RNA sequence: GGGAACGACUCGAGUAGAGUCGAAAAGCAGUGAUCCCACCUCCAGAGGACCCCUUCAGCGAACAGAAGACCUCCAGAGCGGCAGGAGUAAGACCAUAGCGAUAGGAGGAGAUGCUAGGAGUGAGGGCUGCUAUAGAAUGUUCGCAUUCUAUAGCAGAAAAGAAACAACAACAACAAC
Reactivity to DMS in 0.01 (KOAc 150mM, MgCl2 10mM, bicine 150mM(pH8.5), 24C), signal-to-noise 3, nucleotides 027 to 126: g010c070a070g000u000g000a080u000c010c000c010a280c060c020u010c020c020a150g000a080g000g000a110c070c060c110c010u010u000c050a070g020c030g020a040a060c040a070g030a110a050g010a140c020c000u000c010c060a090g010a290g020c060g000g020c090a090g000g000a100g000u020a060a070g010a130c040c010a060u000a100g020c030g020a210u000a080g000g000a020g000g000a080g010a080u010g000c030u020a090g020g000a070g010u000g000a120g000g010g000
Reactivity to 2A3 in 0.01 (KOAc 150mM, MgCl2 10mM, bicine 150mM(pH8.5), 24C), signal-to-noise 2, nucleotides 027 to 126: g100c070a050g070u040g140a080u040c040c010c000a020c010c010u000c020c000a050g030a090g100g050a080c000c040c030c000u060u040c000a030g040c050g040a030a020c020a060g100a080a020g100a150c010c000u000c010c040a000g050a010g100c070g050g000c050a050g020g060a060g040u160a160a000g120a060c020c010a070u110a040g020c010g090a070u140a110g010g000a030g030g000a050g010a000u080g010c020u020a070g030g010a040g030u070g000a090g000g000g000